[RMDB]
RNA sequence: GGGAACGACUCGAGUAGAGUCGAAAAUAGGUUGAAUUCGUUCAACCUACAGGCAAGCAAGCAGCGCAACGAGACAAGGCGAUAAUAAGUUAGCGCAUGCUGAUACAUCGGUCUUCGGACCGAUGAAAACUUAUAGGAGAUUCGUCUCCUAUAAGUUAAAAGAAACAACAACAACAAC
Reactivity to DMS in 0.01 (KOAc 150mM, MgCl2 10mM, bicine 150mM(pH8.5), 24C), signal-to-noise 9, nucleotides 027 to 126: u000a010g010g010u000u000g000a010a030u000u010c170g020u000u000c000a010a010c000c000u000a010c110a080g010g020c120a090a110g010c120a090a040g020c020a040g000c010g020c010a030a020c030g000a150g000a110c180a070a070g010g010c090g010a080u000a060a070u000a070a130g000u000u000a090g020c000g010c020a050u000g020c010u000g000a160u010a160c010a010u000c000g000g000u000c000u000u010c180g020g000a010c000c000g010a000u000g000a030a060
Reactivity to 2A3 in 0.01 (KOAc 150mM, MgCl2 10mM, bicine 150mM(pH8.5), 24C), signal-to-noise 5, nucleotides 027 to 126: u040a010g010g010u000u010g010a020a010u070u070c160g040u070u010c020a000a000c000c000u000a030c010a010g080g070c060a040a070g020c030a050a010g010c010a030g010c010g000c020a020a020c020g050a010g040a120c080a120a060g140g080c080g090a030u060a180a060u100a200a040g030u020u040a040g000c000g000c030a040u030g010c000u010g000a020u020a150c010a000u000c000g000g000u000c000u010u030c150g090g000a000c000c010g000a000u000g000a000a000